The record gives the reactivity of an RNA of 207 nucleotides to 2A3 and DMS. It was measured as part of the RMDB library RNAMAK. The RNA was probed in 150 mM KOAc, 10 mM MgCl2 and 150 mM bicine (pH 8.5) at 24 C. For 2A3, 3,046 sequencing reads were counted.
RNA sequence: GGGAACGACUCGAGUAGAGUCGAAAAGACCCUUUCGAGGGUCAAUACUGGGGUCUUAGGAGUACGGGACAACAGCGAACUACUCCUGAAGCCUCCACGGGAGCGACAUGUCCUGAAACUAAGACGGAGGCACCCAAUGCAACGCGUUCGCGCGUAAUAUAGCAUGGUUAUUCGUAACCAUGCUAUAAAAAGAAACAACAACAACAAC
Reactivity to 2A3 in 0.01 (KOAc 150mM, MgCl2 10mM, bicine 150mM(pH8.5), 24C), signal-to-noise 4, nucleotides 027 to 156: g000a010c000c000c000u000u050u060c210g090a020g010g000g010u000c010a000a020u180a100c090u060g040g000g030g000u010c030u020u040a010g010g020a030g050u080a060c150g010g000g060a010c030a230a050c050a190g100c010g080a070a030c050u110a030c030u120c010c000u000g010a040a020g000c000c010u000c000c000a050c030g030g000g010a030g060c040g130a120c110a190u160g000u020c000c020u040g030a040a040a010c040u040a050a010g040a020c020g000g010a020g000g000c000a010c010c000c010a040a030u190g040c030a060a040c010g000c010g040u090u060c160g020c000g000c020g160u030a160a030
Reactivity to DMS in 0.01 (KOAc 150mM, MgCl2 10mM, bicine 150mM(pH8.5), 24C), signal-to-noise 2, nucleotides 027 to 156: g000a030c000c010c020u000u020u010c170g020a060g000g030g050u000c000a010a120u020a100c060u010g010g000g020g020u010c050u010u000a020g000g000a160g000u000a090c140g020g040g050a200c010a070a090c100a200g030c120g000a150a140c040u010a040c000u000c020c010u010g020a070a120g020c010c020u000c010c030a170c070g000g020g020a040g000c000g000a190c100a120u000g020u010c010c060u000g040a170a160a220c040u020a030a080g010a040c000g050g030a150g070g040c000a140c010c010c010a020a130u010g000c100a090a060c010g010c020g010u000u000c290g040c040g000c000g000u010a120a280